Notes:
This 177-nucleotide RNA was probed chemically with 2A3 and DMS. 2A3 adducts were read by reverse transcription with SuperScript II with manganese. Reactivities are given for positions 27 through 126. 2A3 is a SHAPE reagent: it acylates the 2'-hydroxyl of flexible nucleotides of all four kinds. The RNA was probed in 150 mM KOAc, 10 mM MgCl2 and 150 mM bicine (pH 8.5) at 24 C.
RNA sequence: GGGAACGACUCGAGUAGAGUCGAAAAGAUAUGGAUUCUCAUUUAAUGACAUCGAUCAGUUCUCGGAAACGAGAACUGGGAGUCAUCCAAUGAGGAAUCCUAAGUCAAAGCCAUGUUCGCAUGGCAACGGUUAAGUGGAGUUCGCUCCACUUAACCGAAAAGAAACAACAACAACAAC
Reactivity to 2A3 in 0.01 (KOAc 150mM, MgCl2 10mM, bicine 150mM(pH8.5), 24C), signal-to-noise 2, nucleotides 027 to 126: g060a050u070a070u150g010g010a000u010u000c000u000c010a010u020u050u120a050a070u020g070a010c090a300u290c150g140a170u130c040a040g000u000u000c000u030c000g040g010a100a060a060c020g000a000g000a000a000c000u000g020g000g010a000g000u020c000a010u050c010c070a010a010u030g020a070g280g130a050a050u000c020c000u020a110a030g070u050c100a150a040a010g010c010c000a020u040g050u000u130c300g000c130a000u000g000g030c000a020a000
Reactivity to DMS in 0.01 (KOAc 150mM, MgCl2 10mM, bicine 150mM(pH8.5), 24C), signal-to-noise 2, nucleotides 027 to 126: g000a110u000a300u000g000g000a020u010u010c000u000c010a030u000u000u000a090a000u000g000a000c000a290u010c220g020a060u030c000a060g000u000u000c010u000c000g000g000a060a100a210c000g000a010g000a010a010c000u010g000g000g010a010g010u000c000a020u000c090c150a040a000u000g000a020g020g000a030a000u000c010c020u000a090a110g000u000c090a090a180a160g000c010c000a010u030g010u010u010c270g010c000a020u000g010g000c020a080a050